This 177-nucleotide RNA was probed chemically with 2A3 and DMS. DMS adducts were read by reverse transcription with MarathonRT. Reactivities are given for positions 27 through 126. The reactions ran in a buffer of 150 mM KOAc, 10 mM MgCl2 and 150 mM bicine (pH 8.5), at 24 C.
RNA sequence: GGGAACGACUCGAGUAGAGUCGAAAAUGCAAAUGCACUCUGUGUCACAUUGAAUUUACCUACAUGUGAAGACAAUUUGUUAGUUUGCUAUAUGAAAGAGAUGUGACUUAUCCAUGCAAUUAGUGCCUAGCCUUUGAGUGUUCGCACUCAAAGGCUAAAAAGAAACAACAACAACAAC
Reactivity to 2A3 in 0.01 (KOAc 150mM, MgCl2 10mM, bicine 150mM(pH8.5), 24C), signal-to-noise 3, nucleotides 027 to 126: u040g010c030a000a130a000u100g000c000a010c000u110c040u090g040u050g010u080c000a000c000a010u010u020g050a100a080u020u160u180a190c050c070u080a090c050a190u090g020u080g110a020a050g060a000c040a130a160u000u110u140g200u090u090a250g040u030u000u040g030c000u030a010u030a010u280g050a040a010a030g070a000g000a020u010g030u000g000a010c000u010u050a140u000c020c010a000u050g010c000a040a130u050u030a100g060u000g020c000c000
Reactivity to DMS in 0.01 (KOAc 150mM, MgCl2 10mM, bicine 150mM(pH8.5), 24C), signal-to-noise 2, nucleotides 027 to 126: u040g010c060a080a000a090u020g010c010a090c040u020c130u020g030u030g000u000c000a000c000a010u000u000g000a270a280u000u010u020a100c180c100u010a220c090a020u060g030u000g000a050a000g030a040c020a070a120u000u020u000g040u000u040a120g000u020u020u020g010c060u030a030u010a070u010g000a000a050a110g000a290g030a000u000g030u020g000a030c010u000u000a040u050c080c050a070u030g000c000a060a100u000u030a020g000u000g020c000c250